[RMDB]
RNA sequence: GGGAACGACUCGAGUAGAGUCGAAAAAGUGAGUAUAGCUCGUUACGACGAGCCAUACUCACAACGGUUUUCCUAAAUCGUCGUGAGACGGACCUUGGAAAACCUAGUAUUUAAAUAACUAGGUCAAAUUAGCCUAGAUCCUUCGGGAUCUAGGCAAGUGAAUCUAUAAGUUCGCUUAUAGAUUCACAAAAGAAACAACAACAACAAC
Reactivity to DMS in 0.01 (KOAc 150mM, MgCl2 10mM, bicine 150mM(pH8.5), 24C), signal-to-noise 2, nucleotides 027 to 156: a180g010u000g000a040g020u000a020u000a030g030c020u000c000g010u000u000a180c300g030a170c010g010a030g090c000c000a010u020a030c000u000c000a010c030a010a080c090g030g000u000u000u010u000c020c020u000a030a050a050u000c010g020u000c000g000u010g000a300g000a040c020g010g010a000c020c000u000u000g000g010a040a050a030a030c010c000u000a020g050u000a090u000u000u000a090a130a220u020a070a140c110u010a030g010g020u000c030a090a070a110u000u000a040g020c000c000u000a000g000a000u000c000c000u000u000c300g080g040g020a000u000c000u000a000g000g010c000a000a000
Reactivity to 2A3 in 0.01 (KOAc 150mM, MgCl2 10mM, bicine 150mM(pH8.5), 24C), signal-to-noise 7, nucleotides 027 to 156: a000g000u000g000a000g000u000a000u000a000g000c000u000c010g010u010u060a100c300g010a000c000g000a090g000c010c000a000u000a000c000u000c000a000c000a000a000c010g000g000u000u000u000u010c000c000u000a000a010a000u050c000g010u000c010g020u040g150a140g000a030c000g000g000a000c000c010u020u020g010g000a000a010a000a000c000c000u000a020g010u010a050u060u110u090a110a180a140u130a070a030c080u050a010g000g010u010c020a010a080a200u170u190a050g000c000c000u000a000g000a000u000c000c000u030u060c160g100g000g000a000u000c000u000a000g000g000c000a000a000
An RNA of 207 nucleotides, treated with DMS and 2A3 and read out base by base. Source: RMDB library M2RFPK, as collected in RNAgym. For 2A3, 10,054 sequencing reads were counted. 2A3 adducts were read by reverse transcription with SuperScript II with manganese. Values cover nucleotides 27 to 156.